[RMDB]
Source information
The record gives the reactivity of an RNA of 177 nucleotides to 2A3 and DMS. The DMS profile rests on 4,050 reads. The data come from the RNA Mapping Database (RMDB), library TTRDEL. Values cover nucleotides 27 to 126. Reactivities are rounded to 0.1 and cut off at 0 and 3. As a SHAPE reagent, 2A3 marks flexible, mostly unpaired nucleotides at the ribose 2'-OH. Conditions: 150 mM KOAc, 10 mM MgCl2 and 150 mM bicine (pH 8.5), 24 C. For 2A3, 6,289 sequencing reads were counted.
RNA sequence: GGGAACGACUCGAGUAGAGUCGAAAAGAUAUGGAGUAAGAGCGAUAAGGCUUUAGUCGGAAACGACUAUGGCCUUUUGACGCUUAUCUCCUAAGUCAAAACCGAUGAGUGUUCGCACUCAUCGGAAGUGUUACAAUUUCUUCGGAAAUUGUAACACAAAAGAAACAACAACAACAAC
Reactivity to 2A3 in 0.01 (KOAc 150mM, MgCl2 10mM, bicine 150mM(pH8.5), 24C), signal-to-noise 3, nucleotides 027 to 126: g010a000u060a040u110g000g000a010g020u120a290a250g060a000g150c030g040a080u070a260a100g000g000c000u000u000u000a010g000u000c000g020g000a040a030a030c000g000a000c020u000a000u000g020g000c000c000u000u010u010u060g010a000c000g000c000u020u030a080u090c000u000c000c010u030a060a020g040u010c030a020a010a120a210c010c010g010a000u000g010a000g020u020g030u060u200c260g020c090a000c000u010c000a000u000c000g010g010a030a020
Reactivity to DMS in 0.01 (KOAc 150mM, MgCl2 10mM, bicine 150mM(pH8.5), 24C), signal-to-noise 4, nucleotides 027 to 126: g000a030u000a300u010g010g000a030g010u010a070a140g010a020g020c000g020a140u010a010a020g010g010c000u000u000u000a000g010u000c000g010g000a080a090a130c010g020a010c010u010a010u000g000g000c000c010u000u000u000u000g010a160c030g000c000u000u010a170u000c010u000c000c020u000a030a120g000u000c010a120a050a100a180c000c010g010a010u000g000a010g020u000g010u000u010c240g010c010a010c000u000c000a010u000c000g000g000a000a030